[RMDB]
RNA sequence: GGGAACGACUCGAGUAGAGUCGAAAAGAUAUGGAUUCACUACCCACCUUGCAAUGGGCGUUGAAAUCGGAAACGAUGGAGCCUGACAAGAGGUGAAUCCUAAGUCAAAUCCUAGUUCGCUAGGAAAGCUAUGUAUCACCUUCGGGUGAUACAUAGCAAAAGAAACAACAACAACAAC
Reactivity to 2A3 in 0.01 (KOAc 150mM, MgCl2 10mM, bicine 150mM(pH8.5), 24C), signal-to-noise 1, nucleotides 027 to 126: g090a060u290a200u270g000g010a000u020u020c020a010c010u210a280c000c040c020a000c020c020u000u030g040c000a190a300u300g020g040g010c060g200u300u070g000a050a050a000u000c010g010g020a040a040a020c020g020a010u030g000g030a000g060c000c010u020g150a120c010a010a010g010a030g000g000u000g000a000a000u030c020c010u030a100a040g100u060c100a080a060a090u030c000c000u000a020g000u030u050c300g050c130u040a000g000g000a100a010a000
Reactivity to DMS in 0.01 (KOAc 150mM, MgCl2 10mM, bicine 150mM(pH8.5), 24C), signal-to-noise 1, nucleotides 027 to 126: g000a070u000a170u020g000g000a030u010u010c000a000c000u000a090c020c020c020a300c110c010u030u010g000c120a080a050u000g010g000g000c020g020u000u020g000a100a050a020u020c020g000g000a100a090a240c000g000a000u030g000g020a110g010c000c030u020g020a070c090a040a010g030a140g040g000u000g040a030a020u000c000c030u000a010a120g010u010c210a100a110a070u000c000c000u000a000g010u000u000c300g010c000u000a010g000g000a000a020a120